[RMDB]
RNA sequence: GGGAACGACUCGAGUAGAGUCGAAAACCGGCUUCCUUCAGCUGCAUGCGGAAGCGGAUGUGCUUCGAAGAGGGCAGGCCGAACUCGAUGAAUGCUGCGUUGGUGGACCGGAACUCACCGCGCUUGCUAAGGAACAGGCAUUCGUGCCUGUUCCUUAAAAAGAAACAACAACAACAAC
Reactivity to 2A3 in 0.01 (KOAc 150mM, MgCl2 10mM, bicine 150mM(pH8.5), 24C), signal-to-noise 1, nucleotides 027 to 126: c030c000g000g000c030u010u030c020c000u000u000c040a030g050c020u100g000c100a040u120g100c100g090g050a170a070g020c000g010g000a060u070g080u150g080c020u010u100c010g110a150a130g020a010g110g000g020c030a030g040g080c000c000g080a030a050c010u050c030g100a100u080g100a170a190u070g040c020u000g030c000g050u070u300g010g000u010g000g000a160c020c070g090g050a060a030c000u000c040a040c000c010g000c000g000c060u120u160g020c050
Reactivity to DMS in 0.01 (KOAc 150mM, MgCl2 10mM, bicine 150mM(pH8.5), 24C), signal-to-noise 1, nucleotides 027 to 126: c080c020g000g000c050u000u000c020c030u000u000c010a120g020c050u000g010c060a020u020g000c280g050g010a050a050g020c020g000g000a050u000g010u000g010c020u000u010c060g020a160a100g000a060g000g000g000c100a020g010g030c020c000g000a100a050c030u000c030g000a170u000g000a120a090u010g000c000u000g000c030g040u000u020g080g020u000g000g000a100c040c060g010g010a030a170c150u000c040a050c000c010g020c050g000c040u000u010g020c100
Chemical mapping of a 177-nucleotide RNA with 2A3 and DMS. The reactions ran in a buffer of 150 mM KOAc, 10 mM MgCl2 and 150 mM bicine (pH 8.5), at 24 C. 2A3 adducts were read by reverse transcription with SuperScript II with manganese.